[RMDB]
This 177-nucleotide RNA was probed chemically with DMS and 2A3. For DMS the reverse transcriptase was MarathonRT. For 2A3 the reverse transcriptase was SuperScript II with manganese. Values are in units of 0.01, from 0 to 300, in steps of 10.
RNA sequence: GGGAACGACUCGAGUAGAGUCGAAAAGAUAUGGAUCGAGUCCAGGACAUGCGUAUUGGUCGGAAACGACCAGUCACGCAACAGCCUGGCUCGAUCCUAAGUCAAAGGAUUUGGUUCGCCAAAUCCACGUAGGAGAUUUCUUCGGAAAUCUCCUACGAAAAGAAACAACAACAACAAC
Reactivity to DMS in 0.01 (KOAc 150mM, MgCl2 10mM, bicine 150mM(pH8.5), 24C), signal-to-noise 2, nucleotides 027 to 126: g010a030u000a300u010g000g010a020u010c000g020a000g010u030c000c000a010g030g000a100c110a260u000g000c020g000u000a020u010u010g010g000u000c010g010g010a050a050a190c000g000a010c000c000a000g010u000c200a010c010g010c010a050a090c270a150g000c000c000u000g010g020c000u000c000g030a000u000c000c000u000a000a070g000u000c050a080a160a130g010g000a010u000u000u020g000g000u000u000c290g040c000c000a010a010a010u000c000c000a030
Reactivity to 2A3 in 0.01 (KOAc 150mM, MgCl2 10mM, bicine 150mM(pH8.5), 24C), signal-to-noise 2, nucleotides 027 to 126: g010a010u060a040u110g000g000a010u000c000g000a000g100u140c070c020a000g040g040a100c110a300u300g000c010g000u000a010u020u020g020g020u010c010g000g020a050a020a010c020g000a020c020c000a010g010u010c040a010c000g050c000a080a080c080a110g170c000c000u000g000g010c000u000c000g020a000u000c000c000u010a000a000g000u000c010a020a110a160g030g010a000u020u010u000g030g070u040u130c300g070c120c000a000a000a000u000c000c000a000
Source: RMDB library TTRDES, as collected in RNAgym. The reactions ran in a buffer of 150 mM KOAc, 10 mM MgCl2 and 150 mM bicine (pH 8.5), at 24 C.